[RMDB]
RNA sequence: GGGAACGACUCGAGUAGAGUCGAAAAGGGGUCAUCUGACAUGAGACUCUAAGAGCAACAGCAUACUGAAGCCUCCACGGUAUGACAUGCUCGAAGAGUCUCAACAGCAGAUGACGGAGGCACCCAAAAGCCAUUAGCGCUUCGGCGCUAAUGGCAAGAACAAUCAACAGUUCGCUGUUGAUUGUUCAAAAGAAACAACAACAACAAC
Reactivity to 2A3 in 0.01 (KOAc 150mM, MgCl2 10mM, bicine 150mM(pH8.5), 24C), signal-to-noise 3, nucleotides 027 to 156: g080g010g050g050u010c010a000u000c010u050g040a180c070a270u220g000a010g000a010c000u000c010u000a050a000g000a000g000c040a040a110c070a130g040c000a020u000a000c010u040g080a160a030g010c000c000u030c010c000a030c010g000g000u000a010u000g100a100c050a160u220g000c000u020c030g010a000a000g010a000g000u000c000u000c000a010a000c000a000g000c000a000g000a000u000g010a000c010g000g010a010g000g030c010a040c000c000c020a050a130a030a020g000c000c000a000u020u010a000g000c000g000c030u060u080c230g100g000c030g000c000u000a000a000u000g000g000c000a000a000
Reactivity to DMS in 0.01 (KOAc 150mM, MgCl2 10mM, bicine 150mM(pH8.5), 24C), signal-to-noise 1, nucleotides 027 to 156: g000g020g050g040u000c030a010u000c000u010g010a130c060a300u000g000a060g010a010c000u000c000u000a050a300g010a040g050c000a160a130c090a180g000c000a020u020a020c010u010g000a060a060g060c050c020u000c020c010a300c050g030g000u010a050u000g000a070c100a300u000g000c040u000c010g000a250a020g000a020g030u000c010u020c050a000a040c090a180g010c000a050g000a020u010g000a020c010g000g040a080g000g030c010a060c050c000c020a120a070a130a180g020c000c000a000u000u000a010g000c000g000c020u000u010c300g040g000c090g060c010u000a000a010u020g060g060c000a000a020